[RMDB]
RNA sequence: GGGAACGACUCGAGUAGAGUCGAAAAGAUAUGGAGGUCGAUGAGCCUGAACUACGUCGAUGCGGUCGGAAACGACCGGGCAGACGCAGGCGAGACCUCCUAAGUCAAAAGACUGGUUCGCCAGUCAGAAAACAUCCUGGUUCGCCAGGAUGUUUUCAAAAGAAACAACAACAACAAC
Reactivity to DMS in 0.01 (KOAc 150mM, MgCl2 10mM, bicine 150mM(pH8.5), 24C), signal-to-noise 2, nucleotides 027 to 126: g000a030u000a300u000g000g030a010g030g020u000c000g000a190u020g000a220g030c000c000u010g000a230a140c150u010a300c040g000u000c000g020a160u010g000c000g000g020u000c000g000g000a130a050a180c010g050a000c000c000g000g000g060c140a280g000a010c000g030c000a020g000g010c000g000a120g000a030c020c010u000c020c000u000a000a080g010u010c030a170a110a100a110g000a010c010u000g000g000u000u020c300g110c000c010a010g000u000c030a100
Reactivity to 2A3 in 0.01 (KOAc 150mM, MgCl2 10mM, bicine 150mM(pH8.5), 24C), signal-to-noise 1, nucleotides 027 to 126: g030a010u100a090u200g000g010a000g080g040u090c130g040a300u170g000a140g000c040c000u000g020a090a090c170u300a060c180g030u020c000g020a020u200g200c010g000g000u020c000g030g070a020a210a160c000g010a000c030c010g020g060g000c050a000g000a010c040g060c070a000g030g000c040g020a090g000a020c000c020u000c010c000u020a020a000g000u040c000a000a090a000a040g000a010c010u000g010g040u030u040c140g160c070c010a000g020u000c020a010